[RMDB]
RNA sequence: GGGAACGACUCGAGUAGAGUCGAAAAAGACGUUUUGGCUGACCACCGAGGGUCGCGGCGUGGAUGUGGUGCUCAACUCGCUGGCCGGUGAGUUCACCGACGCAUCGUUGCGGUUACUGCCGCGAGGCAGAGCUGAGCUAUUCGUAGCUCAGCUCUGAAAAGAAACAACAACAACAAC
Reactivity to DMS in 0.01 (KOAc 150mM, MgCl2 10mM, bicine 150mM(pH8.5), 24C), signal-to-noise 9, nucleotides 027 to 126: a080g010a100c120g010u000u000u000u010g010g000c040u000g010a070c040c030a300c050c030g000a090g010g010g020u000c030g020c030g010g010c030g020u000g000g010a080u010g020u010g010g020u010g010c300u000c100a050a060c020u000c020g010c020u000g010g010c130c100g000g000u000g010a090g010u000u010c020a020c020c010g000a110c050g000c020a050u000c140g000u010u010g010c050g000g000u000u000a080c130u010g010c000c000g010c030g000a030g010g020
Reactivity to 2A3 in 0.01 (KOAc 150mM, MgCl2 10mM, bicine 150mM(pH8.5), 24C), signal-to-noise 6, nucleotides 027 to 126: a000g100a020c070g000u020u020u120u170g060g000c040u020g010a040c010c000a020c020c050g050a100g050g050g040u050c030g000c010g020g000c060g020u060g050g060a110u090g100u140g090g030u030g010c040u040c120a010a030c010u020c040g000c040u040g100g060c070c060g010g000u020g010a060g030u100u110c020a030c030c000g030a030c030g000c010a040u130c120g170u110u110g000c020g040g010u070u110a070c040u120g020c010c000g010c010g010a020g030g010